[RMDB]
RNA sequence: GGGAACGACUCGAGUAGAGUCGAAAAAGCACGGUUUUUGAGGACGCAUUUUGUCCGUGCGGUCAUGCCCUCCUUUACACUUUCUCGCAUGGUGCGGGAGUGUGGAGAGGAAACAAAAGCUAGUCUCGAUAGGCGGUUAACUUCGGUUAACCGCCAACAUCGCUACGAGGUUCGCCUCGUAGCGAUGAAAAGAAACAACAACAACAAC
Reactivity to 2A3 in 0.01 (KOAc 150mM, MgCl2 10mM, bicine 150mM(pH8.5), 24C), signal-to-noise 2, nucleotides 027 to 156: a000g020c010a010c020g000g000u000u010u020u010u000g080a120g000g020a030c060g060c160a210u000u000u000u000g000u000c010c000g010u000g000c010g000g040u090c030a060u120g040c000c000c000u020c000c000u000u030u020a020c020a010c030u120u140u020c000u030c000g050c010a100u240g300g010u260g150c020g000g000g010a000g020u010g020u010g010g000a020g000a020g000g040a010a010a000c000a000a000a000a000g010c030u090a030g000u000c000u000c020g060a160u110a080g000g000c010g000g010u000u000a000a010c010u000u020c110g030g010u000u000a000a000c020c000g000c010c000a000a000